[RMDB]
Chemical mapping of a 177-nucleotide RNA with 2A3. The reactions ran in a buffer of 150 mM KOAc, 10 mM MgCl2 and 150 mM bicine (pH 8.5), at 24 C. 2A3 adducts were read by reverse transcription with SuperScript II with manganese.
RNA sequence: GGGAACGACUCGAGUAGAGUCGAAAAUUCCGCCCAGGUCCACCAGAAGCACAUUGCACGGGCAGUGCGCUUCUGAUGGGCCUGACCUGGUUUCGACAGGGGGAGAUAGGGUCGUGAGGCAACUCGUCCUCGUGUAUUGGUUCGCCAAUACACGAGGAAAAGAAACAACAACAACAAC
Reactivity to 2A3 in 0.01 (KOAc 150mM, MgCl2 10mM, bicine 150mM(pH8.5), 24C), signal-to-noise 2, nucleotides 027 to 126: u080u040c020c000g010c010c030c000a000g000g000u000c000c000a020c000c000a000g000a010a000g000c000a010c010a030u000u050g040c060a090c300g150g290g000c000a010g010u010g010c000g010c000u000u000c010u010g020a020u000g000g020g030c000c000u010g000a000c000c000u070g020g000u060u000u090c040g030a040c080a110g040g060g000g060g000a070g010a060u170a050g040g000g010u010c000g020u060g030a040g000g040c020a090a020c050u040c040g030u030